[RMDB]
RNA sequence: GGGAACGACUCGAGUAGAGUCGAAAAAGACGUGUACGCACGUCACACCGUGGCGGCCGUGUAAAACAAACAUUAAGCCGCCAGCGUCCCGGAACAAGGCAUUUUCCGAUUCUCCGGGGGUUGCAAAAAAACUGAACUUGGUUCGCCAAGUUCAGAACUCUGGGAUAUAGUUCGCUAUAUCCCAGAGAAAAGAAACAACAACAACAAC
Reactivity to DMS in 0.01 (KOAc 150mM, MgCl2 10mM, bicine 150mM(pH8.5), 24C), signal-to-noise 1, nucleotides 027 to 156: a050g000a000c000g030u000g000u000a070c280g060c010a040c000g010u010c000a110c080a100c040c070g040u000g020g030c000g030g120c010c040g000u000g010u000a050a050a100a220c240a240a240a110c070a100u000u000a190a040g020c000c000g020c000c000a020g010c020g000u000c000c000c000g000g000a020a090c050a100a170g050g010c150a110u000u000u000u000c020c010g000a180u000u000c010u000c010c040g010g040g010g040g000u010u010g030c000a000a000a060a250a040a040a240c020u010g000a000a000c000u000u000g000g000u000u000c300g030c040c020a000a030g000u000u000c020a000g000a060a100
Reactivity to 2A3 in 0.01 (KOAc 150mM, MgCl2 10mM, bicine 150mM(pH8.5), 24C), signal-to-noise 2, nucleotides 027 to 156: a010g000a000c000g000u000g010u020a030c220g010c150a000c000g000u010c010a000c010a000c030c010g070u040g000g000c010g010g000c000c050g020u010g010u060a090a180a150a100c110a100a220a000c000a020u080u080a050a010g000c000c000g000c000c010a000g000c010g040u040c000c000c010g000g010a030a040c100a080a070g080g000c100a100u030u080u130u200c030c040g030a080u130u000c030u010c050c000g010g000g000g020g030u160u120g010c020a030a070a000a000a000a020a050c000u000g000a000a000c000u000u000g000g010u050u030c050g000c070c010a000a000g000u000u000c000a000g000a020a000
Chemical mapping of a 207-nucleotide RNA with DMS and 2A3. The RNA was probed in 150 mM KOAc, 10 mM MgCl2 and 150 mM bicine (pH 8.5) at 24 C. Reactivities are given for positions 27 through 156. The 2A3 profile rests on 1,371 reads. For DMS, 1,509 sequencing reads were counted. It was measured as part of the RMDB library M2RFPK.